[RMDB]
RNA sequence: GGGAACGACUCGAGUAGAGUCGAAAACGCUAACCUUACAAGUUUUGCAAGGUAUGCACAAAAAACCAACCAAGGUAUAGAGCUCGUCGUCAGAGCACUUUGUUGGUCAUAUCCCGAAAGGGGUAUGCGCAGCAUGAAAUUUCGAUUUCAUGCUGCGAAAAGAAACAACAACAACAAC
Reactivity to DMS in 0.01 (KOAc 150mM, MgCl2 10mM, bicine 150mM(pH8.5), 24C), signal-to-noise 7, nucleotides 027 to 126: c170g000c000u000a210a070c010c000u000u000a040c000a020a160g020u020u040u010u010g030c040a010a000g000g000u000a090u020g010c010a120c220a000a030a020a030a090a090c000c000a010a010c040c080a030a060g000g000u020a160u030a100g020a130g020c010u010c010g030u030c190g010u040c220a140g000a010g010c000a090c020u000u000u000g010u000u000g010g000u000c000a000u000a000u000c000c000c000g010a030a080a100g010g000g000g010u000a000u000g000
Reactivity to 2A3 in 0.01 (KOAc 150mM, MgCl2 10mM, bicine 150mM(pH8.5), 24C), signal-to-noise 9, nucleotides 027 to 126: c070g010c010u040a100a140c010c000u010u030a050c030a190a300g080u130u110u240u070g030c010a010a000g000g000u020a030u110g020c030a010c100a060a090a010a000a000a010c000c000a000a000c000c020a010a010g080g030u100a110u130a160g180a020g020c000u010c010g150u070c080g160u150c190a050g000a000g000c000a010c010u000u000u000g000u000u000g000g000u000c000a000u000a000u010c000c000c000g010a020a020a000g010g000g000g000u000a000u000g010